[RMDB]
RNA sequence: GGGAACGACUCGAGUAGAGUCGAAAACAGGCGGUUAGCAGUAUCACUGUUCCAGCCUAUUACUUAUUUCCAAUUGACUACCUCAUUGGUCUUGGGUAUAGGUUUGUGUGCGUUCCUGACUUUGCUCAAAGACCCGAGUUCGCUCGGGUCAAAAGAAACAACAACAACAAC
Reactivity to DMS in 0.01 (KOAc 150mM, MgCl2 10mM, bicine 150mM(pH8.5), 24C), signal-to-noise 3, nucleotides 027 to 129: c080a000g000g030c120g020g020u020u050a040g010c060a050g030u030a000u090c140a000c060u030g040u050u040c080c030a100g030c040c000u060a030u060u060a000c050u040u020a040u010u020u000c020c040a100a010u070u030g040a090c240u050a140c190c170u040c010a050u030u010g000g030u000c020u010u020g020g000g030u010a020u030a030g010g000u000u000u000g060u030g050u040g060c050g030u010u010c000c050u000g000a020c040u000u000u000g050c000u030c000a060a070a090
Reactivity to 2A3 in 0.01 (KOAc 150mM, MgCl2 10mM, bicine 150mM(pH8.5), 24C), signal-to-noise 8, nucleotides 027 to 129: c030a000g050g000c020g040g030u070u110a010g020c000a000g020u050a040u220c090a020c060u040g040u050u020c010c010a010g000c010c000u000a040u040u090a010c000u020u020a020u050u020u020c000c000a020a050u080u110g030a030c050u060a130c060c050u060c030a050u020u070g000g000u010c000u010u010g010g000g000u020a020u020a020g020g000u040u120u080g160u060g030u060g040c010g010u030u010c000c000u010g020a040c020u040u050u090g020c010u030c060a020a060a020
Overview
An RNA of 170 nucleotides, treated with DMS and 2A3 and read out base by base. Reactivities are given for positions 27 through 129. For DMS the reverse transcriptase was MarathonRT. The 2A3 profile rests on 18,302 reads. As a SHAPE reagent, 2A3 marks flexible, mostly unpaired nucleotides at the ribose 2'-OH.